[RMDB]
RNA sequence: GGGAACGACUCGAGUAGAGUCGAAAAACGUUGAUACGGAUUUACUCCGAGGAGACGAACUACCACGAACAGGGGACACUCUACCCGUGGCGUCUCCGUUUGACGAGUAAGUCCUAAGUCAACAUGCCACGCAGGCACUUCGGUGCCUGCAAAAGAAACAACAACAACAAC
Reactivity to DMS in 0.01 (KOAc 150mM, MgCl2 10mM, bicine 150mM(pH8.5), 24C), signal-to-noise 2, nucleotides 027 to 129: a000c120g040u010u000g000a000u040a150c240g000g030a010u050u000u000a060c040u010c000c010g050a000g000g040a020g000a000c000g000a010a060c050u110a300c020c010a010c050g070a090a300c280a040g060g020g020g070a190c300a050c140u120c030u020a070c170c100c000g030u040g020g000c110g020u000c010u010c000c010g020u060u070u110g010a100c300g030a000g010u020a140a000g030u020c060c000u010a010a010g000u030c010a050a000c010a050u050g020c080c040a000c100
Reactivity to 2A3 in 0.01 (KOAc 150mM, MgCl2 10mM, bicine 150mM(pH8.5), 24C), signal-to-noise 4, nucleotides 027 to 129: a000c100g000u000u000g000a020u020a040c050g010g000a000u000u000u000a000c000u000c010c000g020a040g000g010a020g000a000c000g040a040a010c040u150a060c020c000a000c000g020a090a030c020a100g060g010g000g090a030c040a080c250u080c000u040a070c000c010c020g000u000g000g010c000g000u000c000u010c030c000g010u120u090u160g040a020c010g010a010g000u010a000a000g000u030c000c000u000a030a000g000u020c010a010a000c000a000u030g050c000c000a080c040

Conditions: 150 mM KOAc, 10 mM MgCl2 and 150 mM bicine (pH 8.5), 24 C. This 170-nucleotide RNA was probed chemically with DMS and 2A3. Values cover nucleotides 27 to 129. Source: RMDB library 15KLIB, as collected in RNAgym. Values are in units of 0.01, from 0 to 300, in steps of 10. For DMS the reverse transcriptase was MarathonRT.